The record gives the reactivity of an RNA of 207 nucleotides to DMS and 2A3. Source: RMDB library RNAMAK, as collected in RNAgym. The reactions ran in a buffer of 150 mM KOAc, 10 mM MgCl2 and 150 mM bicine (pH 8.5), at 24 C. 2A3 adducts were read by reverse transcription with SuperScript II with manganese. Reactivities are rounded to 0.1 and cut off at 0 and 3. DMS adducts were read by reverse transcription with MarathonRT. Reactivities are given for positions 27 through 156.
RNA sequence: GGGAACGACUCGAGUAGAGUCGAAAAUCCUAAGUCAAGCCUAUGUGGCGUUGAUCUUCCAUUGUCAGCACGUCGGAAACGACGUGCUUGGAUUUAUGGAAGGGAGCCACAAAUGGCUUGAUAUGGAAAAACAGUUUCAGGUUCGCCUGAAACUGAACUCAAAUGUUAAGUUCGCUUAACAUUUGAGAAAAGAAACAACAACAACAAC
Reactivity to DMS in 0.01 (KOAc 150mM, MgCl2 10mM, bicine 150mM(pH8.5), 24C), signal-to-noise 2, nucleotides 027 to 156: u010c010c000u010a090a230g000u010c010a010a010g000c010c000u010a300u000g010u010g000g000c010g000u010u000g020a050u000c000u000u000c010c000a010u030u000g010u000c000a070g040c000a000c020g000u000c000g030g010a270a160a300c000g020a000c000g040u010g010c000u020u010g010g030a030u000u000u000a000u000g000g010a030a000g020g030g010a040g040c000c000a020c000a010a010a190u010g000g050c010u010u010g000a000u010a140u030g000g000a090a110a120a100a140c000a020g030u000u000u000c000a010g010g030u000u000c300g040c000c010u000g000a020a030a010c010u000g000a040a090
Reactivity to 2A3 in 0.01 (KOAc 150mM, MgCl2 10mM, bicine 150mM(pH8.5), 24C), signal-to-noise 1, nucleotides 027 to 156: u020c000c000u000a080a000g000u010c000a000a020g010c000c010u070a060u020g020u010g000g050c020g010u010u010g000a010u010c000u000u010c000c010a010u000u060g020u000c000a000g000c010a000c000g030u010c010g000g100a080a130a080c010g000a000c010g000u010g010c000u010u010g000g010a010u040u180u150a000u000g000g000a000a000g010g000g000a000g010c010c000a010c010a040a020a010u020g000g000c000u000u000g000a000u000a000u010g030g030a070a040a020a020a030c000a000g000u010u010u000c020a030g050g070u050u070c200g070c070c000u000g020a000a000a000c010u000g010a000a000